Background:
This 177-nucleotide RNA was probed chemically with DMS and 2A3. The RNA was probed in 150 mM KOAc, 10 mM MgCl2 and 150 mM bicine (pH 8.5) at 24 C. The 2A3 profile rests on 2,443 reads.
[RMDB]
RNA sequence: GGGAACGACUCGAGUAGAGUCGAAAAUGUAAAUAAGAAUUCCGGUCUUUUCCGGAGCCACCAAGUGGAAUGCUACGUGCAUAAAUGCACGUAGCUAAAGACCCGAAGGCUAGCAAUAGCUAGCCAACAGGUACUGCUAUUUCGAUAGCAGUACCUGAAAAGAAACAACAACAACAAC
Reactivity to DMS in 0.01 (KOAc 150mM, MgCl2 10mM, bicine 150mM(pH8.5), 24C), signal-to-noise 2, nucleotides 027 to 126: u000g000u030a030a120a260u040a100a130g000a100a150u050u010c030c060g000g000u010c200u020u000u060u030c030c020g010g000a010g000c040c000a030c050c130a090a100g020u000g000g000a120a070u030g000c020u000a000c020g000u000g090c000a090u020a060a100a150u010g040c030a000c000g040u010a000g040c000u000a020a060a190g000a060c000c010c040g030a110a140g000g010c000u000a010g000c000a180a080u060a010g000c000u000a000g000c030c000a040a030
Reactivity to 2A3 in 0.01 (KOAc 150mM, MgCl2 10mM, bicine 150mM(pH8.5), 24C), signal-to-noise 3, nucleotides 027 to 126: u130g000u020a090a110a130u140a150a060g090a080a050u120u010c000c000g000g050u060c110u010u140u080u010c000c000g010g000a010g020c000c000a010c050c050a140a120g030u030g090g050a110a040u080g000c000u000a000c000g020u000g000c020a050u110a280a230a020u200g000c000a000c000g010u030a000g000c000u000a000a000a000g010a050c000c010c000g070a080a020g000g000c010u020a000g000c020a050a300u070a210g000c000u000a000g000c000c000a010a000